The data come from the RNA Mapping Database (RMDB), library OK2TST. This 177-nucleotide RNA was probed chemically with DMS and 2A3. For DMS the reverse transcriptase was MarathonRT. The DMS profile rests on 1,995 reads.
RNA sequence: GGGAACGACUCGAGUAGAGUCGAAAACGCUAACCCGAUGUAUACGGCCUGCGGCUGGGCGAUGAACAGUCGAGGUACUGAAGGUUUCAAUACCUGUUGGGGUUAUGACGACACCGGCCUGAUGCGGGACUGACUCUUACUUCGGUAAGAGUCAGUCAAAAGAAACAACAACAACAAC
Reactivity to DMS in 0.01 (KOAc 150mM, MgCl2 10mM, bicine 150mM(pH8.5), 24C), signal-to-noise 2, nucleotides 027 to 126: c070g010c040u000a090a090c100c000c010g010a050u010g010u000a090u010a120c150g010g000c000c000u000g010c030g020g000c000u010g020g020g010c090g060a140u020g030a060a070c020a020g020u000c000g000a090g000g000u000a030c050u010g010a070a070g010g000u000u000u000c170a060a060u010a030c000c000u000g020u000u000g020g010g000g000u010u000a050u000g030a130c070g040a110c090a050c040c060g020g000c010c060u010g000a110u020g010c070g000g000
Reactivity to 2A3 in 0.01 (KOAc 150mM, MgCl2 10mM, bicine 150mM(pH8.5), 24C), signal-to-noise 1, nucleotides 027 to 126: c000g070c080u060a080a000c020c020c000g060a040u080g100u110a150u050a150c080g020g000c060c000u110g150c090g000g000c020u000g000g040g000c110g190a280u170g050a080a020c010a040g000u000c000g000a010g000g050u070a140c020u030g020a040a010g060g000u000u030u130c100a150a100u060a070c010c020u070g070u090u060g010g000g000g000u040u020a060u140g060a040c020g020a000c010a040c050c030g020g020c030c020u050g070a060u240g100c050g040g000